[RMDB]
RNA sequence: GGGAACGACUCGAGUAGAGUCGAAAAUUCUUUGUACACAGAUAGUUUUUGGUUAAGGGAAGAGAUAUUUGUCUGUGUUUCUUACCCCAUUUGAGUUUAUUCUCAGCUGAGCUGCCAAAAUGAUCCUUGUAAAAGCUCAGCCAGAGAGUGAUACCCCCCUAGUACCACAGUUCGCUGUGGUACUAGGAAAAGAAACAACAACAACAAC
Reactivity to 2A3 in 0.01 (KOAc 150mM, MgCl2 10mM, bicine 150mM(pH8.5), 24C), signal-to-noise 1, nucleotides 027 to 156: u030u000c000u030u050u170g040u180a000c000a000c000a020g060a060u020a030g110u000u200u000u160u200g040g000u060u100a100a090g030g000g040a030a020g020a030g070a070u100a110u220u190u030g020u020c040u010g020u030g040u030u060u030c030u020u090a120c000c000c000c010a030u000u050u160g060a040g000u040u080u000a000u010u040c000u010c000a000g020c020u000g040a000g030c000u020g030c010c030a180a000a090a000u170g070a110u190c030c060u040u090g020u080a010a220a000a000g020c000u000c000a000g000c000c000a010g000a000g000a000g000u030g000a010u070a100c000c000c010c000
This 207-nucleotide RNA was probed chemically with 2A3. For 2A3, 401 sequencing reads were counted. It was measured as part of the RMDB library OK3TST. The reactions ran in a buffer of 150 mM KOAc, 10 mM MgCl2 and 150 mM bicine (pH 8.5), at 24 C.